[RMDB]
RNA sequence: GGGAACGACUCGAGUAGAGUCGAAAAGACAAAUGCAGCAUAUUAGGCUAAGCAGGAAAGGGACGGUAGCUCCUGGUGUCAGUACAUACGGUGUGAUGCAUCUGCGUCGUGCACACAUGCACCCAAAUAGAAAUGUAGUGUUCGCACUACAUUUCUAAAAAGAAACAACAACAACAAC
Reactivity to DMS in 0.01 (KOAc 150mM, MgCl2 10mM, bicine 150mM(pH8.5), 24C), signal-to-noise 7, nucleotides 027 to 126: g020a060c080a040a070a090u010g000c030a040g000c040a070u010a100u000u000a090g000g020c040u010a070a090g030c030a060g010g000a070a080a080g000g010g000a050c070g010g020u010a070g010c060u000c040c020u000g000g000u000g010u000c040a060g000u000a070c100a070u010a080c120g000g010u000g000u000g000a100u010g000c020a030u000c060u000g000c110g010u000c120g010u000g010c020a020c060a020c070a040u000g000c070a110c010c010c020a040a050a120
Reactivity to 2A3 in 0.01 (KOAc 150mM, MgCl2 10mM, bicine 150mM(pH8.5), 24C), signal-to-noise 5, nucleotides 027 to 126: g050a010c030a020a080a030u100g000c010a010g000c020a030u060a120u230u160a120g080g020c010u050a070a030g010c000a010g060g010a060a050a050g020g000g020a010c030g070g060u080a030g030c040u020c020c010u030g010g040u030g030u030c040a030g050u060a060c030a060u140a050c100g050g000u010g020u030g040a180u030g010c000a030u010c030u110g060c020g090u130c030g010u040g010c010a010c000a000c000a030u040g020c010a030c000c010c010a020a080a020

Structure probing data (DMS and 2A3) for a 177-nucleotide construct. Conditions: 150 mM KOAc, 10 mM MgCl2 and 150 mM bicine (pH 8.5), 24 C. For DMS the reverse transcriptase was MarathonRT.